[RMDB]
RNA sequence: GGGAACGACUCGAGUAGAGUCGAAAAUAAUCUGACGGACCAUGAAAUCAGAUUUCAUGCGGAUCUCAUAUCAAGUCAGAUAUGGGGUAGCACCACCUGGGACCCUUCACAGUCUCAGAAUUGUGAAGAUAGUAUUGUAUUUCGAUGCAGUGCUAUCAAAAGAAACAACAACAACAAC
Reactivity to DMS in 0.01 (KOAc 150mM, MgCl2 10mM, bicine 150mM(pH8.5), 24C), signal-to-noise 9, nucleotides 027 to 126: u030a030a030u000c010u010g000a020c070g010g000a150c160c140a070u020g000a070a110a090u000c060a050g000a300u000u000u010c120a080u010g010c040g000g010a040u010c010u000c020a010u010a020u000c020a100a140g030u040c170a080g000a010u000a010u010g000g010g000g010u000a070g010c020a110c080c040a060c080c020u000g000g000g010a080c050c060c030u020u020c100a040c070a150g000u010c010u020c110a080g000a050a050u010u000g000u010g000a070a050
Reactivity to 2A3 in 0.01 (KOAc 150mM, MgCl2 10mM, bicine 150mM(pH8.5), 24C), signal-to-noise 9, nucleotides 027 to 126: u090a000a020u010c010u010g000a010c020g050g050a030c040c040a110u120g050a030a030a010u050c030a020g030a070u020u020u100c070a040u060g030c030g080g130a050u010c010u000c010a010u020a010u030c030a050a090g300u080c040a030g030a000u000a010u010g010g000g000g000u010a010g010c010a010c010c010a030c000c000u000g010g010g010a010c000c000c000u030u050c020a060c010a020g010u000c010u010c050a040g050a070a130u090u060g030u010g020a050a050